This 207-nucleotide RNA was probed chemically with 2A3. It was measured as part of the RMDB library OK3TST. Conditions: 150 mM KOAc, 10 mM MgCl2 and 150 mM bicine (pH 8.5), 24 C.

RNA sequence: GGGAACGACUCGAGUAGAGUCGAAAAUUCAGGACUGACUACACAUGGGUGGAACUCCAAUUUCUGCCUUACUACACACUGGCAACCCAUGUCUAUGGGACCAGCUUGCCUUACCACCUGCUGGACCUCCUCUCUCUGCACAGGUUCAGAAUGCUCAGGGGUAUGGCUAGUUCGCUAGCCAUACCCCAAAAGAAACAACAACAACAAC
Reactivity to 2A3 in 0.01 (KOAc 150mM, MgCl2 10mM, bicine 150mM(pH8.5), 24C), signal-to-noise 1, nucleotides 027 to 156: u140u100c070a070g020g000a060c080u010g000a060c050u040a000c110a030c010a100u140g000g010g000u050g060g010a070a060c020u110c190c200a060a060u000u020u000c080u010g000c000c000u090u070a010c090u070a080c020a000c000a050c000u070g000g080c060a050a210c070c000c000a030u070g060u050c050u070a020u030g000g000g150a220c000c000a000g040c000u010u040g170c070c000u010u130a070c000c010a050c000c000u000g000c000u000g000g040a060c000c000u080c000c110u060c000u000c000u010c010u100g130c090a150c000a040g000g090u060u000c000a110g040a300a020u120g000c040u040c120a000